[RMDB]
Conditions: 150 mM KOAc, 10 mM MgCl2 and 150 mM bicine (pH 8.5), 24 C. This 177-nucleotide RNA was probed chemically with DMS and 2A3. Values are in units of 0.01, from 0 to 300, in steps of 10. DMS adducts were read by reverse transcription with MarathonRT. For 2A3 the reverse transcriptase was SuperScript II with manganese. For DMS, 8,175 sequencing reads were counted. It was measured as part of the RMDB library OK2TRN.
RNA sequence: GGGAACGACUCGAGUAGAGUCGAAAAGGUGGACGAGGCGCUGGCCCAACUCGCGAUGACCGACACGGCGCCGGCCGCGGCUUCUCGCGCCAGCCGCGUCCCGCUGUCCGGGAUGGCGCUACCGGUCUAGAAAUCAAUUGUUCGCAAUUGAUUUCUAAAAAGAAACAACAACAACAAC
Reactivity to DMS in 0.01 (KOAc 150mM, MgCl2 10mM, bicine 150mM(pH8.5), 24C), signal-to-noise 6, nucleotides 027 to 126: g000g020u000g000g010a070c030g010a150g010g010c040g020c030u010g000g000c010c020c020a080a140c140u010c090g000c100g010a110u010g000a070c040c020g010a120c090a070c160g000g010c020g020c050c020g010g030c140c040g020c010g010g010c060u000u010c110u010c110g010c080g010c070c140a060g000c000c010g010c020g010u000c010c000c020g010c160u010g000u010c110c010g000g010g000a070u010g010g010c020g010c010u000a090c090c020g000g000u000c040
Reactivity to 2A3 in 0.01 (KOAc 150mM, MgCl2 10mM, bicine 150mM(pH8.5), 24C), signal-to-noise 2, nucleotides 027 to 126: g040g010u050g020g050a030c050g060a100g040g060c020g000c050u040g040g020c000c000c000a040a080c040u050c060g070c060g140a120u140g020a040c000c020g020a020c030a040c140g030g000c020g000c000c030g030g050c020c030g020c000g010g000c020u110u040c060u060c070g040c010g000c020c010a000g000c020c010g020c000g010u040c000c000c000g020c110u170g070u080c050c030g000g020g000a060u130g010g020c000g000c000u020a040c030c020g000g030u000c000